Structure probing data (2A3 and DMS) for a 207-nucleotide construct. The reactions ran in a buffer of 150 mM KOAc, 10 mM MgCl2 and 150 mM bicine (pH 8.5), at 24 C. Values cover nucleotides 27 to 156. For 2A3, 554 sequencing reads were counted.

[RMDB]
RNA sequence: GGGAACGACUCGAGUAGAGUCGAAAAAAAAAUUAGCUGGGCGUGGUAGCACAUACCGGUAGUUCCAGCUACUUGGGAGACCGAGGCAGGAGGAUUGCUUGAGCCCAGGAGUUUAAGGCUGCAGUGAGCUACGAUGGCGCCACUGCAUUCCAGCCUGUCUUAAGUGAAAGUUCGCUUUCACUUAAGAAAAAGAAACAACAACAACAAC
Reactivity to 2A3 in 0.01 (KOAc 150mM, MgCl2 10mM, bicine 150mM(pH8.5), 24C), signal-to-noise 1, nucleotides 027 to 156: a000a000a000a000a000u090u060a000g000c000u030g000g040g040c060g060u150g010g020u010a010g050c080a160c030a160u040a040c030c000g090g000u030a050g040u060u100c000c000a010g000c000u010a050c000u030u050g010g010g010a150g030a050c070c040g010a050g040g010c050a010g000g030a050g040g010a040u000u180g040c000u040u070g000a010g000c000c020c000a010g000g000a080g030u130u210u160a070a040g000g040c000u000g000c010a010g000u000g030a100g000c000u020a090c130g170a140u260g060g150c070g000c000c000a000c000u000g000c010a010u130u050c030c020a010g000c000c010u020g050
Reactivity to DMS in 0.01 (KOAc 150mM, MgCl2 10mM, bicine 150mM(pH8.5), 24C), signal-to-noise 1, nucleotides 027 to 156: a020a080a140a120a020u020u000a090g040c030u010g000g020g000c020g000u030g000g010u010a040g040c190a070c100a070u000a010c020c010g050g010u000a060g050u000u000c020c010a000g010c010u000a010c050u000u010g000g030g000a180g000a180c020c030g030a070g000g000c110a080g010g030a150g010g020a140u000u010g030c000u010u010g010a130g020c000c010c000a170g000g000a110g060u010u010u000a120a090g010g000c280u000g020c040a080g020u000g000a300g040c010u000a050c070g000a140u010g010g040c000g020c080c010a040c010u010g000c000a070u000u010c110c060a080g010c010c010u000g010